[RMDB]
RNA sequence: GGGAACGACUCGAGUAGAGUCGAAAACGAGGGGAUCCGGAAUCUACGGAUCCGUUACCGGAGUCGGGAUCCUGUCACUCACUCGGAUCCCAACCAACGGAUCCGAGGAUCCGUGCGGGAUCCCUCGUGGGGGAACUAAGUUCGCUUAGUUCCCCCAAAAAGAAACAACAACAACAAC
Reactivity to DMS in 0.01 (KOAc 150mM, MgCl2 10mM, bicine 150mM(pH8.5), 24C), signal-to-noise 1, nucleotides 027 to 126: c070g030a030g000g030g030g000a020u000c000c000g030g040a100a070u020c160u010a140c010g040g010a010u020c050c000g010u010u030a100c140c050g010g010a150g010u000c170g000g000g000a010u000c000c000u000g010u030c050a040c030u010c200a090c010u000c050g000g000a020u000c030c000c180a010a040c160c290a160a140c190g010g000a030u010c020c000g010a160g000g000a110u000c160c200g050u000g020c010g000g000g000a020u010c010c000c040u000c010g000